[RMDB]
RNA sequence: GGGAACGACUCGAGUAGAGUCGAAAAACUGAUCUUGUCUGAUGAAUUUUUGAGCAGUCCUUCACAUUGGGUAAAGUCAGUCAUCUCUAUCAUUAGCAUGUACAUUACCAUAAGUCUGCUUGGCCAGCAUGAUGAUGUCAUUGCCACUGUUACCCCAUCCUACGAAGUAUUUCGAUACUUCGUAGGAAAAAGAAACAACAACAACAAC
Reactivity to DMS in 0.01 (KOAc 150mM, MgCl2 10mM, bicine 150mM(pH8.5), 24C), signal-to-noise 1, nucleotides 027 to 156: a050c000u000g020a100u000c010u010u020g030u000c030u000g000a070u000g030a090a100u010u010u000u000u010g020a060g030c010a140g030u000c040c060u010u010c080a110c020a100u000u010g010g000g050u000a020a020a070g030u000c020a030g000u000c020a170u010c040u000c020u000a070u000c040a090u010u000a080g010c020a030u000g020u000a020c030a050u000u000a030c010c020a050u010a100a120g010u000c010u010g010c050u030u000g000g030c100c050a060g000c100a050u000g000a050u000g010a030u000g010u010c020a090u010u000g020c010c040a110c110u010g000u000u000a230c030c000c000c020a290
Reactivity to 2A3 in 0.01 (KOAc 150mM, MgCl2 10mM, bicine 150mM(pH8.5), 24C), signal-to-noise 3, nucleotides 027 to 156: a000c030u020g010a030u070c030u030u030g040u070c020u010g040a050u020g020a140a300u120u140u120u170u220g050a070g060c100a050g040u100c030c020u110u080c050a050c000a070u020u090g050g000g000u090a030a040a000g040u050c020a000g040u010c010a110u020c030u030c050u100a120u060c030a060u080u180a030g040c020a000u050g050u130a030c000a010u060u130a040c050c030a060u070a230a060g040u070c010u030g030c040u060u090g050g090c120c030a010g000c020a000u080g000a100u060g000a000u060g040u020c020a030u020u170g010c020c020a070c000u060g070u080u090a130c020c000c000c000a000

Source information:
An RNA of 207 nucleotides, treated with DMS and 2A3 and read out base by base. It was measured as part of the RMDB library OK3TST. For DMS, 3,159 sequencing reads were counted.